[RMDB]
RNA sequence: GGGAACGACUCGAGUAGAGUCGAAAAGAUGGUGAGACCAUUUAUGGGAAUGGAGAAUUGAUACUUGCUAACGACAGGCACUUUACUGGCUGCUUCGCUCGCCCGGUAAUCUUCACGGUCCUCUGAGGUGGGGCAGAUGAAAAUCCACAAGGAAACACAUGGAGCAUAAUUUCGAUUAUGCUCCAUGAAAAGAAACAACAACAACAAC
Reactivity to DMS in 0.01 (KOAc 150mM, MgCl2 10mM, bicine 150mM(pH8.5), 24C), signal-to-noise 2, nucleotides 027 to 156: g030a070u000g030g000u000g010a130g080a250c020c010a100u000u000u000a050u000g020g020g000a050a120u000g000g020a110g010a060a160u000u010g030a200u000a040c040u020u000g020c030u000a090a150c040g000a100c030a080g020g000c000a050c070u000u010u010a090c080u010g010g010c070u010g030c040u000u010c030g010c060u000c010g000c020c000c060g000g030u000a040a070u000c060u000u000c010a080c040g020g040u000c030c040u000c100u000g010a100g000g030u000g010g030g020g010c060a070g030a120u000g010a030a020a040a090u000c010c040a050c070a110a070g010g020a090a070a040c070a170
Reactivity to 2A3 in 0.01 (KOAc 150mM, MgCl2 10mM, bicine 150mM(pH8.5), 24C), signal-to-noise 3, nucleotides 027 to 156: g070a050u070g000g040u070g020a060g050a050c030c020a050u040u100u140a110u120g010g010g050a040a060u040g010g010a020g010a070a070u060u090g040a040u080a130c060u080u070g030c010u040a070a070c040g040a040c040a020g010g090c030a040c080u170u120u090a040c000u050g000g000c010u040g010c020u040u070c030g000c070u030c020g050c000c010c010g020g000u050a020a080u040c090u110u050c050a030c070g040g000u040c000c000u030c050u040g050a040g000g060u070g010g030g000g030c050a020g010a020u080g040a020a010a000a050u020c000c000a070c010a040a020g040g030a020a060a000c080a000

Record summary
Conditions: 150 mM KOAc, 10 mM MgCl2 and 150 mM bicine (pH 8.5), 24 C. The record gives the reactivity of an RNA of 207 nucleotides to DMS and 2A3. For DMS, 3,181 sequencing reads were counted. For 2A3, 1,629 sequencing reads were counted. Source: RMDB library OK3TST, as collected in RNAgym.